This 177-nucleotide RNA was probed chemically with DMS and 2A3. Values cover nucleotides 27 to 126. The reactions ran in a buffer of 150 mM KOAc, 10 mM MgCl2 and 150 mM bicine (pH 8.5), at 24 C.
RNA sequence: GGGAACGACUCGAGUAGAGUCGAAAAAUGACGUAAAUGGUACGCUACUAACGAAUAAUAAAGUCAAAGGGCGUAGUUAUAGGGUAUGCCGGAUGAAUAAUCCAAUCUUCAUGUUGGCUUUCUAUUACACGUAGAUUAAGUUCGCUUAAUCUACGUGAAAAGAAACAACAACAACAAC
Reactivity to DMS in 0.01 (KOAc 150mM, MgCl2 10mM, bicine 150mM(pH8.5), 24C), signal-to-noise 4, nucleotides 027 to 126: a080u010g010a060c060g010u010a070a100a080u000g010g010u000a020c020g020c010u000a020c020u010a090a020c030g000a080a120u010a170a150u020a090a110a150g000u000c020a030a070a000g000g000g000c010g030u010a020g010u010u000a070u000a070g010g000g010u000a030u010g010c040c050g000g000a020u010g000a080a040u000a110a110u000c050c060a080a090u020c100u000u010c110a060u010g010u010u000g000g020c160u000u000u000c030u000a060u010u000a110
Reactivity to 2A3 in 0.01 (KOAc 150mM, MgCl2 10mM, bicine 150mM(pH8.5), 24C), signal-to-noise 2, nucleotides 027 to 126: a020u080g010a010c040g030u080a130a000a000u140g080g020u020a000c000g010c000u030a000c000u010a100a010c040g050a020a030u260a190a020u090a060a090a030g020u010c000a120a180a120g030g000g000c000g020u000a010g000u020u040a070u090a050g110g030g030u090a030u120g080c070c020g000g000a020u030g010a030a040u070a120a020u000c030c000a010a060u030c030u150u090c040a090u070g030u050u000g060g000c000u010u040u000c020u020a110u010u030a030